[RMDB]
RNA sequence: GGGAACGACUCGAGUAGAGUCGAAAACAAGUUUUCACUCAGGUAGACUCCCUGGGUACAAGGGUGCCUGCUCAGCAGUCGGGCAUGAGCUGCUCCGAUGGGCGAAGGAGGUUGUCUAUCCCACAGUUGGAGAGGGGCCCUCUCUGCCCCAGUGGGCAUGUAGCAAGAUGUUCGCAUCUUGCUACAUAAAAGAAACAACAACAACAAC
Reactivity to 2A3 in 0.01 (KOAc 150mM, MgCl2 10mM, bicine 150mM(pH8.5), 24C), signal-to-noise 2, nucleotides 027 to 156: c030a000a120g060u050u060u120u100c020a020c000u030c020a010g120g000u100a140g090a170c070u070c020c000c010u040g030g010g000u070a050c060a110a080g070g030g030u040g000c000c000u060g090c000u020c070a030g040c030a000g020u030c040g030g000g000c050a030u160g070a050g080c050u020g000c010u050c080c000g050a060u100g010g030g090c020g050a090a000g010g040a010g010g000u100u230g040u030c000u070a080u090c060c020c020a090c110a110g140u240u110g040g000a030g000a050g080g040g020g000c010c040c000u020c000u000c010u020g010c010c000c020c010a060g070u220g000g000g000c040
Source: RMDB library OK3TST, as collected in RNAgym. An RNA of 207 nucleotides, treated with 2A3 and read out base by base. For 2A3 the reverse transcriptase was SuperScript II with manganese. Reactivities are given for positions 27 through 156.